The record gives the reactivity of an RNA of 207 nucleotides to 2A3. The RNA was probed in 150 mM KOAc, 10 mM MgCl2 and 150 mM bicine (pH 8.5) at 24 C.
[RMDB]
RNA sequence: GGGAACGACUCGAGUAGAGUCGAAAAGAAAGAAAGAAAGUUCAUUGUUUAUCGGAAACUUUAAACUAUAACCAUUCAAACUUUUCCAGAAGUAAGUUUGAAUAGAAAUUAAAAAGAAACUUCUGAAUAACCUUAUCAUGCUUCGGCAUGAUAAGAACGAAUAUUGGUACUUCGGUACCAAUAUUCGAAAAGAAACAACAACAACAAC
Reactivity to 2A3 in 0.01 (KOAc 150mM, MgCl2 10mM, bicine 150mM(pH8.5), 24C), signal-to-noise 1, nucleotides 027 to 156: g000a000a010a010g030a030a020a000g090a080a130a010g010u050u020c030a030u100u140g040u120u100u110a110u240c110g040g070a060a030a040c020u060u060u050a070a130a010c020u020a020u050a300a060c040c010a000u000u000c000a010a000a000c000u020u070u040u000c030c010a000g000a020a000g000u010a000a010g010u000u000u000g000a000a000u010a090g030a000a100a030u210u280a090a070a010a000a000g040a040a010a000c000u000u000c000u020g020a020a030u110a090a020c000c010u000u000a000u000c000a000u000g010c000u020u060c110g060g000c000a010u000g000a000u000a010a000g000a020a000